Structure probing data (DMS and 2A3) for a 207-nucleotide construct. The RNA was probed in 150 mM KOAc, 10 mM MgCl2 and 150 mM bicine (pH 8.5) at 24 C. It was measured as part of the RMDB library M2RFOK. DMS adducts were read by reverse transcription with MarathonRT. For DMS, 3,497 sequencing reads were counted. As a SHAPE reagent, 2A3 marks flexible, mostly unpaired nucleotides at the ribose 2'-OH.
[RMDB]
RNA sequence: GGGAACGACUCGAGUAGAGUCGAAAAUGGGCUACCAGUAAGCGAAAAAUGAUACAGGACGAAAAAAACAUAAUUCGAGAUUUUUCAGGAUGGAUUUUUUUAGGUAUCUAACAAAACUAUUCUGAUGCAACGUAGAGCACGUUCGCGUGCUCUACAAGAUGUAUGAUAAGUUCGCUUAUCAUACAUCAAAAGAAACAACAACAACAAC
Reactivity to DMS in 0.01 (KOAc 150mM, MgCl2 10mM, bicine 150mM(pH8.5), 24C), signal-to-noise 2, nucleotides 027 to 156: u000g000g000g030c030u040a080c060c020a180g020u000a080a080g030c040g000a000a040a140a160a130u010g010a110u010a070c060a080g000g000a130c040g010a010a000a050a090a070a070a100c040a090u000a050a160u000u000c030g020a200g020a210u010u000u000u000u000c020a020g020g000a030u000g000g000a030u000u000u040u000u030u000u000a050g020g040u000a090u000c010u010a040a050c090a020a030a020a040c030u010a050u000u000c000u010g010a020u000g010c090a040a070c100g000u000a000g010a000g020c010a030c000g060u010u000c280g040c040g070u000g000c000u000c000u000a020c000a030a030
Reactivity to 2A3 in 0.01 (KOAc 150mM, MgCl2 10mM, bicine 150mM(pH8.5), 24C), signal-to-noise 5, nucleotides 027 to 156: u060g030g020g020c020u050a050c020c010a040g050u080a050a020g040c020g080a040a040a010a050a060u110g030a030u070a080c040a050g060g060a040c030g070a050a010a010a010a010a040a000c060a050u190a100a070u110u080c050g010a020g020a160u090u180u070u070u050c010a010g010g000a000u000g060g000a060u030u010u010u000u000u010u010a040g040g000u180a110u200c010u000a010a010c010a010a010a000a000c000u010a010u020u000c000u010g010a020u060g040c030a050a060c100g000u000a000g000a000g000c000a000c000g000u020u040c070g010c000g040u000g000c000u000c000u000a000c000a000a000